[RMDB]
RNA sequence: GGGAACGACUCGAGUAGAGUCGAAAAUCCAUGGCACGCAGGAAGCGAAUCCGGGACUCUCAACCCCCAUCGGGAGACCCGGAGCCCUGAGCGAACAUCCACGCGGCUGUGCACCGGCCCCGUGUGGACUUCGUAUCCAUUUCGAUGGAUACGAAGUAAAAGAAACAACAACAACAAC
Reactivity to DMS in 0.01 (KOAc 150mM, MgCl2 10mM, bicine 150mM(pH8.5), 24C), signal-to-noise 5, nucleotides 027 to 126: u010c010c000a070u020g010g020c060a040c060g010c010a030g000g000a100a100g000c090g010a110a130u010c000c010g010g000g010a130c010u010c000u000c000a130a150c060c020c000c030c040a100u020c170g000g000g020a010g000a080c010c000c000g030g010a000g010c040c010c000u010g020a110g010c030g010a130a050c150a160u000c010c010a000c000g020c120g000g020c160u040g000u010g000c080a130c110c050g030g000c020c090c010c010g010u010g010u000g000g000
Reactivity to 2A3 in 0.01 (KOAc 150mM, MgCl2 10mM, bicine 150mM(pH8.5), 24C), signal-to-noise 6, nucleotides 027 to 126: u000c000c010a060u070g090g000c030a010c080g000c010a010g010g060a190a080g060c070g070a080a040u010c000c000g020g000g040a100c000u000c000u030c020a130a300c020c020c000c010c010a060u120c060g010g020g000a010g040a080c010c000c000g000g010a000g000c010c000c000u050g010a050g030c050g030a060a030c020a100u010c010c000a000c000g000c010g020g020c060u060g060u140g050c020a080c070c040g110g000c010c030c000c000g010u010g000u020g010g000